[RMDB]
RNA sequence: GGGAACGACUCGAGUAGAGUCGAAAAGCGCGGCGUAUGCGAUAAUAGCGCGCUAUAUAUAUAUACGCCGCGCGCGCUAUAUACGCGCGGCGAUAGCGUAUUAUGCGUAUUAUCGCUAUGCGGCGCGCCCCAAGUUAUCGUUCGCGAUAACUUGGGGAAAAGAAACAACAACAACAAC
Reactivity to 2A3 in 0.01 (KOAc 150mM, MgCl2 10mM, bicine 150mM(pH8.5), 24C), signal-to-noise 3, nucleotides 027 to 126: g000c020g000c030g150g020c010g030u040a020u240g010c010g010a000u010a010a010u030a030g120c010g000c000g000c010u010a010u000a000u010a000u000a000u000a010u000a070c010g020c020c000g000c000g000c000g000c000g000c000u110a080u030a020u030a300c010g040c010g000c020g020g040c030g000a020u040a000g030c010g020u020a070u240u120a080u300g020c030g020u030a010u010u000a000u000c000g000c010u020a010u010g000c030g040g020c010g030c000g000
Reactivity to DMS in 0.01 (KOAc 150mM, MgCl2 10mM, bicine 150mM(pH8.5), 24C), signal-to-noise 2, nucleotides 027 to 126: g020c010g020c000g010g010c010g040u000a010u010g030c020g020a030u000a010a030u000a060g030c060g000c010g010c110u010a030u010a060u010a060u000a090u000a110u000a300c030g030c000c020g010c000g000c000g020c030g020c150u010a090u010a120u030a060c020g000c000g040c000g010g000c000g000a030u000a020g010c130g010u000a020u010u000a110u010g010c000g020u000a020u000u000a010u000c010g010c000u000a030u000g020c010g000g000c010g010c010g020